[RMDB]
Chemical mapping of a 177-nucleotide RNA with DMS and 2A3.
RNA sequence: GGGAACGACUCGAGUAGAGUCGAAAACAUGCAGGCGUCUGGUGCUAGCCAUGCAGCGCCAGGGUCAGCACUGCGUGCUGAAGUGGCGGAAGCGUCGCUGUCACGCCCGGCGAUGGGGCUACACGACGCAGGUGCGGAGGUUCGCCUUCGUACUUGCAAAAGAAACAACAACAACAAC
Reactivity to DMS in 0.01 (KOAc 150mM, MgCl2 10mM, bicine 150mM(pH8.5), 24C), signal-to-noise 9, nucleotides 027 to 126: c030a040u010g020c020a030g000g010c000g000u010c010u010g000g010u000g000c050u000a080g030c030c130a100u040g010c050a030g000c000g000c000c000a020g000g000g000u050c030a070g000c010a080c000u000g000c050g020u000g010c070u000g000a100a070g010u000g000g000c040g000g000a110a080g010c020g010u000c010g010c050u010g000u010c060a040c090g000c010c000c010g000g010c070g000a060u010g000g000g010g000c040u010a040c050a070c040g000a070c080
Reactivity to 2A3 in 0.01 (KOAc 150mM, MgCl2 10mM, bicine 150mM(pH8.5), 24C), signal-to-noise 9, nucleotides 027 to 126: c010a010u030g000c000a000g010g000c000g010u000c000u030g010g000u000g000c010u010a030g000c020c040a100u200g010c010a000g000c000g000c000c000a010g020g000g030u130c020a010g000c030a030c020u040g010c010g010u000g000c020u060g030a080a010g000u000g010g000c000g000g030a050a010g050c000g010u010c010g000c010u000g030u020c020a010c030g020c000c000c000g020g020c040g030a060u090g020g000g010g000c000u020a010c050a000c030g040a010c030
Reactivities are given for positions 27 through 126.